[RMDB]
Description:
Structure probing data (DMS and 2A3) for a 177-nucleotide construct. For 2A3, 1,408 sequencing reads were counted. The data come from the RNA Mapping Database (RMDB), library OK2TST. Conditions: 150 mM KOAc, 10 mM MgCl2 and 150 mM bicine (pH 8.5), 24 C.
RNA sequence: GGGAACGACUCGAGUAGAGUCGAAAACUAUUAGAUACCGAAUUUUCCAAUAUAAGGUCGUCGAAAAACUGGUUAACUAGUGAAUUUUAUGGAAGCAUCAUUAAAAACAAGGCAGUUCUAAGAUCGAUCCAUUUACCUAGUUCGCUAGGUAAAUGGAAAAAGAAACAACAACAACAAC
Reactivity to DMS in 0.01 (KOAc 150mM, MgCl2 10mM, bicine 150mM(pH8.5), 24C), signal-to-noise 2, nucleotides 027 to 126: c020u020a120u030u010a150g000a110u000a070c070c030g010a110a110u000u000u000u000c030c030a080a090u000a110u020a140a170g010g000u000c080g020u010c050g000a100a100a090a070a060c040u000g000g000u020u000a060a020c030u020a050g000u000g010a060a080u000u000u000u000a050u000g010g010a080a080g000c090a040u000c030a010u000u000a020a070a050a030a050c080a080a110g020g010c040a010g000u000u010c040u000a050a110g000a040u000c090g000a130
Reactivity to 2A3 in 0.01 (KOAc 150mM, MgCl2 10mM, bicine 150mM(pH8.5), 24C), signal-to-noise 2, nucleotides 027 to 126: c010u030a100u230u190a070g050a090u080a120c030c030g050a070a070u070u050u070u000c020c020a110a040u080a020u030a230a000g030g000u050c020g010u010c000g060a010a020a000a020a070c020u040g120g000u140u100a090a060c020u060a090g030u030g050a130a160u020u050u140u170a070u120g000g080a070a020g070c000a020u070c000a000u010u130a060a050a000a000a000c040a040a000g080g000c030a030g010u010u000c000u040a050a040g010a040u030c020g030a000